[RMDB]
RNA sequence: GGGAACGACUCGAGUAGAGUCGAAAAACAGAGGGCCAAACCACCCCAGUGAAUUCAUAACAGGAGAUAACUUGCUUAAGACCUGACUGUUUUUAAAAGCGAAUGCCAGUGAGUGAAAUGCCAGCUCAUUCACAGAUUAAUUCGUUAAUCUGUGAAUAAAAGAAACAACAACAACAAC
Reactivity to DMS in 0.01 (KOAc 150mM, MgCl2 10mM, bicine 150mM(pH8.5), 24C), signal-to-noise 9, nucleotides 027 to 126: a060c060a060g010a300g010g000g000c030c050a050a090a090c070c050a120c060c010c020c030a080g010u010g000a080a080u020u010c070a040u010a070a100c080a050g000g000a080g000a090u010a070a070c060u010u010g000c070u010u020a060a080g000a070c040c020u000g000a120c060u000g000u000u010u000u010u010a030a070a090a080g020c040g010a060a060u020g010c020c030a040g020u010g000a050g010u010g000a040a070a060u010g000c030c030a080g010c060u010c070
Reactivity to 2A3 in 0.01 (KOAc 150mM, MgCl2 10mM, bicine 150mM(pH8.5), 24C), signal-to-noise 9, nucleotides 027 to 126: a000c040a010g070a060g020g020g020c040c020a080a020a030c030c000a030c010c000c000c000a010g020u020g100a060a080u110u060c040a030u080a180a060c010a040g030g030a050g020a070u090a110a080c030u040u090g050c010u100u110a080a010g040a070c010c010u020g110a140c030u030g100u020u020u010u050u140a060a110a010a000g030c020g030a050a020u090g030c010c010a020g020u020g060a010g010u040g040a100a070a020u070g010c010c010a010g000c010u010c030